The record gives the reactivity of an RNA of 177 nucleotides to DMS and 2A3. For DMS the reverse transcriptase was MarathonRT. Reactivities are given for positions 27 through 126. The data come from the RNA Mapping Database (RMDB), library OK1LIB. Conditions: 150 mM KOAc, 10 mM MgCl2 and 150 mM bicine (pH 8.5), 24 C. The DMS profile rests on 57,189 reads. DMS (dimethyl sulfate) methylates the pairing face of unpaired adenines and cytosines.
RNA sequence: GGGAACGACUCGAGUAGAGUCGAAAACGAUAUGCUAAGAUCGCAUGUUAUUAUAGCGUAUUAGUAUGCUCGAUAUGAACAUGCGAUGUUGUCAUGAAAAUGACAACAAUAUAAAUGUCGAGCAUAAGGUAGUUGAUGAUUUCGAUCGUCGACUACCAAAAGAAACAACAACAACAAC
Reactivity to DMS in 0.01 (KOAc 150mM, MgCl2 10mM, bicine 150mM(pH8.5), 24C), signal-to-noise 9, nucleotides 027 to 126: c070g000a010u000a000u000g000c000u000a030a220g000a140u010c020g000c000a010u000g000u000u020a120u020u020a100u000a020g000c010g030u000a010u010u010a090g010u010a010u000g000c000u000c010g000a010u000a010u010g010a060a020c010a000u000g000c000g030a100u010g000u000u000g000u000c000a000u000g000a090a080a130a010u000g000a010c000a000a000c000a050a070u040a080u060a060a110a030u010g020u000c000g000a010g000c000a010u000a050a090
Reactivity to 2A3 in 0.01 (KOAc 150mM, MgCl2 10mM, bicine 150mM(pH8.5), 24C), signal-to-noise 9, nucleotides 027 to 126: c020g010a010u010a010u030g000c010u020a040a040g030a100u020c020g000c000a000u000g040u040u090a190u140u080a100u080a030g010c010g010u010a020u020u030a080g180u050a030u050g000c000u000c000g000a000u000a020u060g060a020a000c000a000u000g000c000g020a020u030g000u000u000g000u000c000a000u020g080a080a070a040a020u010g000a000c000a000a000c000a030a020u240a020u060a060a170a020u040g000u000c000g000a000g000c000a000u010a010a010